[RMDB]
RNA sequence: GGGAACGACUCGAGUAGAGUCGAAAAUAGACUAGCCGUAGUGGCGAAAAACGACCUGAUAGGGUGCUGCAGAGGCCCACUAUUAGGCUAGUAUAAAAAUCUCUGCUCAAUAAAGAAAGUGUGCAAAAUAAUGCUACCUAUUCGUAGGUAGCAUUAUAAAAGAAACAACAACAACAAC
Reactivity to DMS in 0.01 (KOAc 150mM, MgCl2 10mM, bicine 150mM(pH8.5), 24C), signal-to-noise 5, nucleotides 027 to 126: u060a100g010a030c010u000a010g020c000c000g010u010a010g010u010g000g040c030g010a050a130a060a130a120c040g000a060c000c000u000g000a180u050a090g000g010g000u000g010c010u040g000c060a020g000a030g000g000c000c000c000a000c000u000a000u010u040a120g010g010c000u000a000g010u000a010u010a000a010a020a020a010u010c010u010c010u000g010c000u080c190a100a080u040a100a100a150g000a070a100a070g020u010g010u000g000c110a060a070a090
Reactivity to 2A3 in 0.01 (KOAc 150mM, MgCl2 10mM, bicine 150mM(pH8.5), 24C), signal-to-noise 5, nucleotides 027 to 126: u170a020g220a010c010u000a000g000c000c000g010u000a000g000u010g000g000c010g070a150a020a010a010a000c010g010a010c000c000u060g070a140u240a170g120g000g000u010g010c010u080g000c010a000g000a020g020g000c010c010c000a000c000u010a010u040u090a040g000g000c000u010a000g000u000a010u020a030a010a000a000a010u060c000u000c000u010g010c010u040c100a140a200u250a190a100a040g150a110a120a050g060u100g020u060g080c060a070a080a040